[RMDB]
RNA sequence: GGGAACGACUCGAGUAGAGUCGAAAAUUGCCGCCGAUGAUUGACCACGUUACCGAGCGGUCGCUUGCGCUCGCGGACAAGCACGGGUCGGACUAUCGCACGGCGUAUUCGCUUUGGGGCGGCGACUUUGUGACGAACGAAUCAAUCUAUGAGGGGCGUAUAGGGUGUAGUUCGCUACACCCUAUACAAAAGAAACAACAACAACAAC
Reactivity to DMS in 0.01 (KOAc 150mM, MgCl2 10mM, bicine 150mM(pH8.5), 24C), signal-to-noise 2, nucleotides 027 to 156: u000u010g020c000c010g000c000c000g010a140u000g000a040u000u000g010a080c020c060a200c050g010u000u000a110c070c020g000a300g030c020g030g020u000c030g020c080u000u000g060c030g020c010u010c290g020c050g000g010a080c070a070a070g010c040a090c020g030g010g030u010c020g030g010a210c090u000a070u000c020g020c020a070c020g000g020c010g000u010a030u000u000c000g000c030u000u000u030g040g010g030g070c030g010g010c010g010a020c020u000u000u000g010u000g020a130c040g000a080a110c040g000a220a100u010c010a020a040u000c020u000a130u010g000a190g000g010g000g020c130
Reactivity to 2A3 in 0.01 (KOAc 150mM, MgCl2 10mM, bicine 150mM(pH8.5), 24C), signal-to-noise 7, nucleotides 027 to 156: u130u090g020c020c110g120c040c000g030a060u090g010a000u020u020g010a030c030c030a130c120g010u010u050a200c040c010g010a010g010c020g000g010u040c020g020c080u140u300g030c150g030c000u030c010g020c040g010g020a030c050a070a040g000c040a050c170g030g020g080u190c090g070g040a180c160u190a120u280c050g000c040a030c030g000g000c010g020u040a080u030u080c010g000c030u100u130u290g030g000g020g010c000g000g020c010g010a000c000u200u210u300g030u050g030a060c020g010a010a020c010g010a000a010u020c000a010a000u010c000u060a070u100g060a140g010g020g000g000c010